[RMDB]
RNA sequence: GGGAACGACUCGAGUAGAGUCGAAAACUUUCCACGAACAAAUUGAGGAGGCACACAUAUGAAAGCAGUGCGUGCAGCAUUAGUUUCAGCAACGACCGCCAGCGAUCGUUCUGCUGGUGCCACUGCGCGGGUGAUGGGUGUUCGCACCCAUCACCCGAAAAGAAACAACAACAACAAC
Reactivity to 2A3 in 0.01 (KOAc 150mM, MgCl2 10mM, bicine 150mM(pH8.5), 24C), signal-to-noise 1, nucleotides 027 to 126: c000u000u000u000c000c010a050c140g160a090a020c090a000a030a240u160u300g000a110g040g100a090g090g000c030a000c000a000c040a000u040a070u300g170a300a000a020g000c010a000g040u000g110c070g000u120g000c040a020g000c000a000u050u050a110g000u060u130u060c000a020g170c060a050a040c000g000a100c000c000g080c010c020a000g090c010g070a130u120c000g100u150u000c030u000g000c000u000g000g020u050g050c050c000a000c040u040g000c000g000
This 177-nucleotide RNA was probed chemically with 2A3. Source: RMDB library OK1LIB, as collected in RNAgym. Reactivities are given for positions 27 through 126. As a SHAPE reagent, 2A3 marks flexible, mostly unpaired nucleotides at the ribose 2'-OH. Conditions: 150 mM KOAc, 10 mM MgCl2 and 150 mM bicine (pH 8.5), 24 C.